[RMDB]
RNA sequence: GGGAACGACUCGAGUAGAGUCGAAAACAUUAGGAAGAAUAGAAUAGGAAGCACACACAGAGAAUAAUCAAUUAUGGAAACUGACAAACUAGGGAAGCCAUAACUGCUAUCUAGUAGACCCCAAGUCCCAUACCGGUAGGUUCGCCUACCGGUAUGGAAAAGAAACAACAACAACAAC
Reactivity to DMS in 0.01 (KOAc 150mM, MgCl2 10mM, bicine 150mM(pH8.5), 24C), signal-to-noise 1, nucleotides 027 to 126: c080a090u000u000a050g000g020a070a040g000a170a060u000a070g030a040a110u010a090g010g000a080a120g000c080a040c100a040c060a130c070a070g000a090g020a140a050u000a050a040u000c070a040a080u020u000a060u000g000g000a080a040a180c090u010g040a060c130a050a070a080c090u000a030g000g000g000a090a130g000c060c070a010u020a030a060c100u010g000c080u000a060u010c050u000a000g020u020a060g020a080c050c000c010c030a040a110g010u010c120
Reactivity to 2A3 in 0.01 (KOAc 150mM, MgCl2 10mM, bicine 150mM(pH8.5), 24C), signal-to-noise 1, nucleotides 027 to 126: c020a010u090u120a050g080g020a020a090g060a080a090u110a150g020a060a090u030a110g060g000a020a040g030c000a010c000a000c010a000c020a060g070a010g000a030a120u080a060a040u090c000a000a040u080u030a020u150g050g010a160a080a040c020u020g050a040c050a100a140a000c070u050a030g010g020g020a020a020g040c010c010a080u080a070a030c000u010g030c020u020a060u120c030u020a030g030u010a070g130a080c010c030c010c000a040a000g030u000c020

Conditions: 150 mM KOAc, 10 mM MgCl2 and 150 mM bicine (pH 8.5), 24 C. This 177-nucleotide RNA was probed chemically with DMS and 2A3. For DMS the reverse transcriptase was MarathonRT.